An RNA of 170 nucleotides, treated with 2A3 and DMS and read out base by base. Source: RMDB library 15KLIB, as collected in RNAgym. The reactions ran in a buffer of 150 mM KOAc, 10 mM MgCl2 and 150 mM bicine (pH 8.5), at 24 C.
RNA sequence: GGGAACGACUCGAGUAGAGUCGAAAAGCAGGGUCCGCGUUCCAUUCUUUCUUACCUUGUGGCCGGCAUGGUCCCAGCCUCCUCGCUGGCGCCGGCUGGGCAACAUUCCGAGGGGACCGUCCCCUCGUCAGGAUUUCCUUCGGGAAAUCCAAAAGAAACAACAACAACAAC
Reactivity to 2A3 in 0.01 (KOAc 150mM, MgCl2 10mM, bicine 150mM(pH8.5), 24C), signal-to-noise 5, nucleotides 027 to 129: g040c010a020g020g020g040u030c020c020g000c010g000u040u020c020c040a110u070u060c030u090u140u000c030u090u110a140c050c000u060u080g050u110g050g040c000c000g020g010c050a090u160g040g010u090c000c020c000a020g000c000c010u070c040c000u090c040g020c030u030g010g000c040g020c020c000g050g000c010u040g000g030g010c010a080a020c030a120u200u090c050c010g000a000g000g000g000g000a030c010c020g270u250c000c000c000c020u000c000g020u040c040a040
Reactivity to DMS in 0.01 (KOAc 150mM, MgCl2 10mM, bicine 150mM(pH8.5), 24C), signal-to-noise 5, nucleotides 027 to 129: g030c070a130g020g040g080u000c060c050g010c030g050u050u030c030c030a180u060u020c040u030u050u040c060u090u050a040c000c080u010u040g060u060g070g050c030c010g010g030c090a030u080g030g020u070c300c000c020a000g020c000c150u040c000c000u030c170g000c020u020g010g000c180g000c000c020g020g050c010u000g020g000g050c030a010a050c060a060u110u090c100c070g000a000g010g020g060g040a160c140c230g070u060c010c000c030c040u020c050g000u040c260a130